[RMDB]
RNA sequence: GGGAACGACUCGAGUAGAGUCGAAAAGGAGACGGAGCACGAAUUAUCUGGAAGCGAUGAAGACGCUAAAAGUGAAACCGGCCAGCGGGGACACAUCGCGGGAGGAGCCUCUCUAGUGAGAGAGGAGGAAACAUUGUCUAUUCGUAGACAAUGUUUCAAAAGAAACAACAACAACAAC
Reactivity to DMS in 0.01 (KOAc 150mM, MgCl2 10mM, bicine 150mM(pH8.5), 24C), signal-to-noise 9, nucleotides 027 to 126: g000g010a070g010a060c070g010g020a090g020c040a060c060g000a090a070u020u030a060u020c030u010g000g010a260a090g000c020g010a060u020g010a110a110g010a130c030g010c020u000a030a100a100a080g010u010g000a070a140a110c080c040g000g000c100c060a080g000c050g010g000g000g000a210c100a080c070a040u010c040g000c030g000g000g000a100g000g010a100g010c000c000u000c000u000c010u000a150g020u020g000a110g010a020g010a010g000g000a110g010
Reactivity to 2A3 in 0.01 (KOAc 150mM, MgCl2 10mM, bicine 150mM(pH8.5), 24C), signal-to-noise 9, nucleotides 027 to 126: g060g000a040g010a030c050g020g010a040g020c030a010c080g050a080a090u150u050a060u160c030u050g030g060a060a010g020c010g010a030u100g090a090a030g100a020c020g000c030u050a090a050a020a010g050u070g080a090a020a030c020c000g030g020c060c010a030g050c020g010g010g010g030a000c020a000c010a090u070c030g000c010g010g010g010a050g010g030a030g010c010c000u000c000u000c010u020a100g120u190g230a050g000a000g000a010g050g000a020g070

Source: RMDB library OK1LIB, as collected in RNAgym. An RNA of 177 nucleotides, treated with DMS and 2A3 and read out base by base. For DMS, 24,755 sequencing reads were counted. High 2A3 reactivity points to a flexible backbone, as in loops and unpaired stretches.